[RMDB]
RNA sequence: GGGAACGACUCGAGUAGAGUCGAAAAUGCGAGACGUCAAGUGCUACCAGGGGACCGACAUCGUCCGUGGUUGCGAUCCGUUGGUGAAGCCCGUUGGCAGACAGGCCUGUGAUCUGCAGCCCUGCCCUAGAGCACAGAGUUUCGACUCUGUGCUCUAAAAAGAAACAACAACAACAAC
Reactivity to DMS in 0.01 (KOAc 150mM, MgCl2 10mM, bicine 150mM(pH8.5), 24C), signal-to-noise 2, nucleotides 027 to 126: u030g010c000g000a060g010a110c050g000u000c050a170a080g010u010g010c030u010a070c030c030a030g010g020g000g020a040c100c020g020a060c080a060u010c050g020u000c130c120g000u010g020g010u000u000g030c040g010a050u000c030c060g030u010u000g000g000u000g020a140a120g000c020c020c020g010u030u000g000g000c080a080g000a130c070a050g000g010c110c040u000g000u020g000a150u000c110u020g000c010a060g010c080c020c050u000g000c030c010c110
Reactivity to 2A3 in 0.01 (KOAc 150mM, MgCl2 10mM, bicine 150mM(pH8.5), 24C), signal-to-noise 1, nucleotides 027 to 126: u040g000c030g020a090g040a020c060g010u110c020a110a030g000u020g180c000u010a060c000c030a020g070g030g000g040a010c060c000g060a110c040a110u110c080g120u120c050c050g100u130g010g000u090u020g000c010g010a080u000c010c100g200u050u120g010g030u100g060a070a030g090c010c000c010g050u050u060g070g000c040a000g090a140c010a020g050g050c000c020u070g060u020g060a300u050c040u160g040c000a000g010c000c000c010u080g020c030c000c000